[RMDB]
RNA sequence: GGGAACGACUCGAGUAGAGUCGAAAAGAUAUGGACAUUCGGAGAGGGAGGAUGCUCGGAAACGAGCAUCUCCCCACCCUACCCACCUCCGGUGUCCUAAGUCAAAAGCGAAUGUUCGCAUUCGCAACAACCAGAUAUACUUCGGUAUAUCUGGUUGAAAAGAAACAACAACAACAAC
Reactivity to 2A3 in 0.01 (KOAc 150mM, MgCl2 10mM, bicine 150mM(pH8.5), 24C), signal-to-noise 5, nucleotides 027 to 126: g020a010u060a040u130g000g000a020c020a040u290u230c300g010g010a030g030a140g040g060g000a040g080g020a020u010g000c000u000c000g000g010a040a050a020c000g010a000g000c000a000u000c020u010c000c000c000c000a030c010c000c010u140a190c050c010c030a130c050c000u000c000c000g000g010u000g000u000c000c000u010a080a020g060u030c050a070a020a140a040g010c000g010a020a000u020g020u050u140c280g000c130a010u000u000c000g000c010a010a020
Reactivity to DMS in 0.01 (KOAc 150mM, MgCl2 10mM, bicine 150mM(pH8.5), 24C), signal-to-noise 7, nucleotides 027 to 126: g000a050u000a300u010g000g010a020c010a010u000u010c010g020g010a020g010a250g030g010g010a040g010g010a010u000g000c000u000c020g010g000a080a070a180c010g020a010g010c000a000u000c010u000c020c010c010c040a050c150c090c070u010a130c080c050c070a160c190c010u000c000c010g000g020u000g010u000c000c000u000a020a060g000u010c050a070a070a110a110g000c000g010a010a010u000g010u000u010c210g010c010a030u000u000c010g000c010a130a150